[RMDB]
RNA sequence: GGGAACGACUCGAGUAGAGUCGAAAACAGGAACCCACUCAUUGGGGUCCGCUGUUCCAUUCUUUCUUACCUUGUGGCCGGCAUGGUCCCAGCCUCCCCGCUGGCGCCGGCUGGGCAACAUUCCGAGGGUAUACUAAGUGUUCGCACUUAGUAUACCAAAAGAAACAACAACAACAAC
Reactivity to DMS in 0.01 (KOAc 150mM, MgCl2 10mM, bicine 150mM(pH8.5), 24C), signal-to-noise 4, nucleotides 027 to 126: c080a090g020g010a040a040c010c000c010a090c290u020c180a160u000u010g020g000g000g000u000c010c020g020c090u000g000u000u000c040c020a110u000u000c060u000u000u010c060u000u000a090c080c050u000u000g020u000g010g030c000c000g010g000c020a090u010g030g010u000c300c000c000a030g020c010c040u010c050c020c050c180g000c020u000g010g030c270g000c010c010g000g000c010u000g000g010g020c030a080a040c040a100u010u020c030c030g010a260g000
Reactivity to 2A3 in 0.01 (KOAc 150mM, MgCl2 10mM, bicine 150mM(pH8.5), 24C), signal-to-noise 1, nucleotides 027 to 126: c040a020g000g040a020a010c010c030c020a020c100u190c040a280u090u180g010g010g000g030u020c020c010g030c050u050g030u060u030c030c030a060u120u000c020u050u190u000c040u150u080a160c010c020u070u060g050u080g150g060c040c000g070g000c070a130u160g040g020u080c000c020c010a000g000c000c010u090c010c020c000c030g040c040u040g000g030c040g030c040c020g030g000c030u010g010g010g050c010a080a020c000a060u110u040c060c030g030a070g140

The data come from the RNA Mapping Database (RMDB), library VIROID. Structure probing data (DMS and 2A3) for a 177-nucleotide construct. Values are in units of 0.01, from 0 to 300, in steps of 10. 2A3 is a SHAPE reagent: it acylates the 2'-hydroxyl of flexible nucleotides of all four kinds.